[RMDB]
RNA sequence: GGGAACGACUCGAGUAGAGUCGAAAAAGGAAGAUGGGCAUGGAUGUUAGCCCAGAGGCAGUCUUCUUCAGCAAAAAGAGGAGGAUUGGCAAAUGUUAGCUCAGGGCCGAUCUUCCUCACAAAAAAACAUUCACCUCAAGUUCGCUUGAGGUGAAUGAAAAGAAACAACAACAACAAC
Reactivity to DMS in 0.01 (KOAc 150mM, MgCl2 10mM, bicine 150mM(pH8.5), 24C), signal-to-noise 2, nucleotides 027 to 126: a040g000g010a050a010g000a070u000g010g000g020c020a100u000g000g000a100u010g000u000u010a140g010c060c020c030a030g000a130g010g010c020a140g010u000c020u000u000c000u010u000c080a130g020c190a050a060a080a100a060g010a020g010g000a010g010g000a020u000u000g010g000c000a030a090a100u000g010u000u000a110g000c140u010c050a030g020g000g010c000c010g000a010u000c000u020u010c000c000u010c020a010c010a000a010a020a090a060a080a160
Reactivity to 2A3 in 0.01 (KOAc 150mM, MgCl2 10mM, bicine 150mM(pH8.5), 24C), signal-to-noise 2, nucleotides 027 to 126: a000g070g000a020a000g030a050u080g040g050g040c050a010u070g050g110a040u080g100u230u140a040g060c000c000c000a010g010a020g010g000c030a020g030u000c000u020u000c000u070u050c030a060g050c090a050a080a080a080a030g010a000g030g000a020g000g000a010u000u030g010g000c030a120a090a160u120g010u100u080a030g030c110u040c090a040g040g100g000c000c010g010a000u000c000u000u000c000c020u000c000a010c000a000a080a010a000a010a000a010